This 207-nucleotide RNA was probed chemically with DMS and 2A3. The reactions ran in a buffer of 150 mM KOAc, 10 mM MgCl2 and 150 mM bicine (pH 8.5), at 24 C. Values cover nucleotides 27 to 156. DMS adducts were read by reverse transcription with MarathonRT. The 2A3 profile rests on 8,792 reads.
RNA sequence: GGGAACGACUCGAGUAGAGUCGAAAAGGAGCUUUUCGAAGCUCCGUCGGGCGUACUACGUCGACAUGUCCGAGGACUACCCACCCAUUUCCCAAAUAGGAAAUGGAGGUCCGAGGACAACAGCGACGUAUCGCAAAUCUCAGCGUUCGCGCUGAAACUAUCAAGUCCAAUUCGUUGGACUUGAUAGAAAAGAAACAACAACAACAAC
Reactivity to DMS in 0.01 (KOAc 150mM, MgCl2 10mM, bicine 150mM(pH8.5), 24C), signal-to-noise 5, nucleotides 027 to 156: g030g010a030g010c000u010u000u000u020c180g030a030a030g010c020u000c010c010g020u000c030g030g030g020c010g000u000a080c110u010a030c030g010u000c000g010a090c060a300u000g020u000c010c010g000a300g000g010a040c010u000a040c020c020c040a300c170c010c010a030u000u010u000c000c000c010a060a230a230u010a050g000g000a020a020a010u000g000g000a140g030g020u000c010c010g000a300g000g010a040c000a000a030c090a120g010c030g000a040c010g000u000a010u000c030g000c010a070a050a090u000c070u000c000a030g020c000g010u000u020c230g040c050g000c010u000g010a030a060a220
Reactivity to 2A3 in 0.01 (KOAc 150mM, MgCl2 10mM, bicine 150mM(pH8.5), 24C), signal-to-noise 7, nucleotides 027 to 156: g000g000a010g010c030u060u090u110u180c230g190a040a000g000c000u000c010c000g000u020c010g040g080g010c010g030u070a120c060u010a010c040g010u000c010g030a120c050a120u080g000u000c010c000g000a030g000g000a000c010u110a090c070c060c050a070c010c010c000a000u000u010u010c030c020c020a190a300a180u300a130g000g000a000a000a000u000g000g000a000g000g000u000c000c000g000a010g000g010a000c000a010a000c020a000g030c010g010a030c010g000u020a040u300c010g000c000a020a100a110u120c100u010c010a010g000c000g050u110u160c190g010c010g000c120u020g000a050a010a000